RNA sequence: GGGAACGACUCGAGUAGAGUCGAAAAACGCUGCUCUGGGCGGAAGAGUCUUCUGACACUUCUAGCCUAUUCAGCUUCGCGUCCUUGAGGCCUGGCGUAACGCGGCUCUUGCCACCAGGUUGCCUCCGACUACUUGAGAGUUCGCUCUCAAGUAGUCAAAAGAAACAACAACAACAAC
Reactivity to DMS in 0.01 (KOAc 150mM, MgCl2 10mM, bicine 150mM(pH8.5), 24C), signal-to-noise 2, nucleotides 027 to 126: a080c180g030c000u000g000c020u000c000u000g000g010g020c000g000g000a000a000g000a050g010u010c000u010u010c290u030g000a000c000a090c010u000u000c010u000a110g020c010c010u010a000u010u010c010a040g000c010u000u000c090g030c120g010u000c030c030u000u020g010a030g010g010c010c000u020g000g000c280g010u010a080a070c190g010c100g000g000c060u000c110u000u010g010c010c050a170c030c030a010g000g000u000u010g030c020c000u000c020c300
Reactivity to 2A3 in 0.01 (KOAc 150mM, MgCl2 10mM, bicine 150mM(pH8.5), 24C), signal-to-noise 2, nucleotides 027 to 126: a000c040g000c010u010g000c010u000c000u010g020g000g000c020g010g010a000a010g030a000g000u000c010u280u080c150u300g000a000c010a010c030u000u000c000u040a210g000c000c000u010a000u060u060c010a010g000c000u020u060c050g000c030g030u030c010c000u020u080g010a010g000g020c000c000u010g040g000c050g090u080a130a050c080g030c020g110g010c030u040c090u110u220g040c020c010a030c000c000a050g050g000u050u120g020c000c000u030c010c040
An RNA of 177 nucleotides, treated with DMS and 2A3 and read out base by base. The RNA was probed in 150 mM KOAc, 10 mM MgCl2 and 150 mM bicine (pH 8.5) at 24 C. DMS adducts were read by reverse transcription with MarathonRT. It was measured as part of the RMDB library VIROID. Values are in units of 0.01, from 0 to 300, in steps of 10.